[RMDB]
Annotation:
The record gives the reactivity of an RNA of 207 nucleotides to 2A3. The data come from the RNA Mapping Database (RMDB), library OK3TST. Conditions: 150 mM KOAc, 10 mM MgCl2 and 150 mM bicine (pH 8.5), 24 C. Reactivities are given for positions 27 through 156.
RNA sequence: GGGAACGACUCGAGUAGAGUCGAAAAGGCUUGAAUCUGCUCUUCCAAGCAUUUUAUCAUCUGCUUCUUAAACAGAUCACGAAUAUCGCGGUCUUGUACGGCGUUUGGCGCGGGAGGUGCGCUGGCGGACGGCCCGCCGCCUGGAGUACGAGAGGGCGGGCUGGAAACCAUUCGUGGUUUCCAGCCCAAAAGAAACAACAACAACAAC
Reactivity to 2A3 in 0.01 (KOAc 150mM, MgCl2 10mM, bicine 150mM(pH8.5), 24C), signal-to-noise 2, nucleotides 027 to 156: g060g030c030u090u050g050a060a060u070c050u070g000c050u020c030u070u020c040c050a050a010g010c000a010u000u160u180u200a160u220c040a030u000c020u020g030c010u100u110c020u110u300a120a140a060c020a010g020a060u050c040a020c050g070a250a120u110a070u220c040g000c030g020g010u000c000u050u150g030u040a040c040g020g040c000g050u030u050u130g030g000c000g000c030g050g020g020a040g050g050u060g000c070g000c040u050g020g000c050g030g000a080c030g050g000c000c020c030g000c020c000g020c010c000u020g010g050a070g010u050a060c100g000a010g000a040g040g040g000c050